[RMDB]
RNA sequence: GGGAACGACUCGAGUAGAGUCGAAAAAGGCAGCUUCCCGGCAUUUAAGCUACGGACGAUGCAAACGUAGCAGGCAUCGAAUUUUCGGCCCUUCGAAAAGCUGAGAUGAGCUCAGCAAGGGAAUCAAAUUGCUGGUAUUAUUCGUAAUACCAGCAAUAAAAGAAACAACAACAACAAC
Reactivity to DMS in 0.01 (KOAc 150mM, MgCl2 10mM, bicine 150mM(pH8.5), 24C), signal-to-noise 5, nucleotides 027 to 126: a060g000g000c030a060g000c070u000u000c010c010c010g010g010c030a120u010u000u000a080a100g000c010u000a020c020g010g000a090c070g010a080u000g020c080a050a100a190c030g010u000a010g010c030a130g000g000c060a050u000c050g020a080a150u000u000u000u000c030g010g010c060c020c030u000u000c080g000a140a080a070a100g010c010u000g000a030g010a290u010g020a160g010c010u000c000a020g000c010a070a060g000g000g010a070a060u010c140a060a080
Reactivity to 2A3 in 0.01 (KOAc 150mM, MgCl2 10mM, bicine 150mM(pH8.5), 24C), signal-to-noise 2, nucleotides 027 to 126: a000g000g010c010a020g000c000u000u000c000c000c000g020g020c020a000u170u160u110a090a020g000c010u010a020c030g050g080a040c080g110a110u150g080c090a110a050a000c020g010u010a010g000c020a000g010g060c010a060u080c070g070a140a110u090u030u040u060c010g020g000c000c010c020u070u070c020g060a070a070a030a020g000c010u010g010a010g010a080u190g070a060g080c000u010c010a000g000c000a010a010g050g020g030a020a030u120c060a080a130